[RMDB]
RNA sequence: GGGAACGACUCGAGUAGAGUCGAAAAAGGGGCACCCACAAUAGGAUGGCAAAAGGGGACCAUCGGGUCCGUCGUUCCAUCCUUUUCUUACCUUGUGGCCGGCAUGGCCCCAGCCUCCUCGCUGGCGUAGCUACAACGUUCGCGUUGUAGAAAAGAAACAACAACAACAAC
Reactivity to DMS in 0.01 (KOAc 150mM, MgCl2 10mM, bicine 150mM(pH8.5), 24C), signal-to-noise 9, nucleotides 027 to 129: a080g040g000g010g000c030a130c040c010c000a060c150a050a040u000a040g000g000a060u030g000g020c140a040a030a080a070g000g000g000g000a060c000c000a170u060c240g000g020g010u000c020c020g000u030c040g010u020u020c010c020a050u010c020c020u000u010u020u020c020u010u000a130c130c070u000u020g040u030g020g020c040c020g000g040c080a070u020g000g000c000c000c020c030a090g000c040c030u010c010c020u020c050g010c040u000g000g000c050g030u060a060g030
Reactivity to 2A3 in 0.01 (KOAc 150mM, MgCl2 10mM, bicine 150mM(pH8.5), 24C), signal-to-noise 9, nucleotides 027 to 129: a000g020g000g000g000c020a040c010c010c000a020c020a020a050u100a050g030g000a010u030g010g060c120a020a010a050a090g080g010g000g010a020c030c010a160u300c130g160g010g000u010c010c010g110u080c030g060u080u010c010c000a020u020c010c000u020u030u030u010c020u030u090a060c010c010u030u050g030u070g080g010c030c020g040g060c080a110u130g070g000c010c010c000c000a010g040c000c000u010c010c000u030c020g020c030u040g040g000c040g040u060a020g050